[RMDB]
RNA sequence: GGGAACGACUCGAGUAGAGUCGAAAAGAUAUGGAACCGGUAGACAUGCUCCCUCGGAAACGAGAGCGAGCAACAGCUACGGGUUCCUAAGUCAAAAGGCUUUACCGUGUUCGCACGGUAAAGCCAAGUUAUCUGAUGCGUUCGCGCAUCAGAUAACAAAAGAAACAACAACAACAAC
Reactivity to 2A3 in 0.01 (KOAc 150mM, MgCl2 10mM, bicine 150mM(pH8.5), 24C), signal-to-noise 1, nucleotides 027 to 126: g000a010u020a030u080g020g030a020a000c030c070g140g000u010a010g080a170c060a200u090g000c000u010c030c000c000u000c020g030g000a030a010a020c020g000a010g000a030g050c190g020a000g000c000a010a020c090a030g020c010u050a010c190g060g040g000u000u000c000c000u000a040a000g030u010c020a040a080a090a140g000g000c000u000u000u000a000c000c010g040u010g090u030u080c300g070c120a010c000g080g000u000a000a000a000g040c000c000a000a000
Reactivity to DMS in 0.01 (KOAc 150mM, MgCl2 10mM, bicine 150mM(pH8.5), 24C), signal-to-noise 1, nucleotides 027 to 126: g000a040u000a270u010g000g010a010a030c000c000g000g030u000a000g030a110c140a180u010g010c000u000c000c010c000u000c000g000g000a070a030a110c010g000a010g010a080g020c170g000a000g000c000a010a070c300a080g000c010u000a000c010g020g020g010u000u000c000c000u000a020a060g000u000c000a060a100a170a090g000g000c000u000u010u010a020c000c010g010u000g020u000u020c180g000c020a000c010g000g000u000a000a000a000g000c000c010a000a000